[RMDB]
RNA sequence: GGGAACGACUCGAGUAGAGUCGAAAAGAUAUGGAAUCUUGGGCUCGAGGAUCGUAGGUCGGAAACGACUACGGGAGAGCACUUGAUUCCUAAGUCAAAGUAACAUUCUGUUCGCAGAAUGUUACAACAAUAUCGCUGUCUUCGGACAGCGAUAUUGAAAAGAAACAACAACAACAAC
Reactivity to 2A3 in 0.01 (KOAc 150mM, MgCl2 10mM, bicine 150mM(pH8.5), 24C), signal-to-noise 1, nucleotides 027 to 126: g020a010u010a010u070g000g000a030a010u020c010u010u020g050g030g000c020u010c030g060a300g020g010a000u010c000g000u030a030g130g300u060c000g000g000a000a020a010c000g000a000c000u000a000c010g000g000g000a030g000a000g030c010a010c000u000u000g000a000u000u000c000c000u000a040a000g020u020c030a170a030a120g000u000a000a000c000a020u020u010c010u030g080u060u120c300g050c110a000g010a000a000u020g000u000u000a000c000a000a010
Reactivity to DMS in 0.01 (KOAc 150mM, MgCl2 10mM, bicine 150mM(pH8.5), 24C), signal-to-noise 1, nucleotides 027 to 126: g010a030u000a110u030g000g000a020a000u000c000u000u000g010g020g010c010u000c000g010a110g000g000a030u000c000g010u000a010g010g010u010c000g000g000a020a010a080c000g010a050c000u010a010c010g000g000g000a030g020a000g050c020a010c010u000u000g000a010u000u000c010c010u000a000a030g000u000c010a120a110a100g010u000a010a000c000a000u000u000c000u010g010u010u010c200g030c010a020g000a020a000u000g010u000u000a000c010a110a130